[RMDB]
RNA sequence: GGGAACGACUCGAGUAGAGUCGAAAACUUGUGUUGGGCUUGAGAGCGAUACGCGCUCGCUUGUGCUCAUUAUUAUUCGCGUAAGCCACGACCCUGUCACAAGCCGGCUCGACACGAAUCUGGUCGCUCUGUGACUUGGUUUCGACCAGGUCGCGGGAAAAGAAACAACAACAACAAC
Reactivity to 2A3 in 0.01 (KOAc 150mM, MgCl2 10mM, bicine 150mM(pH8.5), 24C), signal-to-noise 9, nucleotides 027 to 126: c010u030u050g000u000g000u020u030g010g010g010c030u100u140g180a040g000a010g080c010g040a070u080a150c110g010c000g000c060u010c010g000c000u000u020g010u020g000c020u000c070a010u010u080a080u060u050a080u020u090c040g000c010g030u040a040a030g020c020c010a040c020g050a100c000c000c010u020g050u050c000a000c000a000a000g000c010c000g000g000c000u000c000g000a000c000a000c020g020a000a010u030c040u040g030g010u040c010g000c020
Reactivity to DMS in 0.01 (KOAc 150mM, MgCl2 10mM, bicine 150mM(pH8.5), 24C), signal-to-noise 9, nucleotides 027 to 126: c050u000u020g010u010g010u010u010g010g000g010c050u000u010g010a160g010a030g000c010g010a210u030a090c200g010c030g010c080u000c020g000c020u010u000g010u010g000c090u010c090a070u020u040a070u030u030a090u020u010c110g000c060g000u010a060a110g010c050c080a110c050g000a060c060c030c060u010g000u010c010a010c010a010a020g000c040c170g000g000c010u000c010g000a020c040a040c030g000a000a000u020c070u010g000g010u010c030g010c100

Background
The record gives the reactivity of an RNA of 177 nucleotides to 2A3 and DMS. The reactions ran in a buffer of 150 mM KOAc, 10 mM MgCl2 and 150 mM bicine (pH 8.5), at 24 C. DMS (dimethyl sulfate) methylates the pairing face of unpaired adenines and cytosines.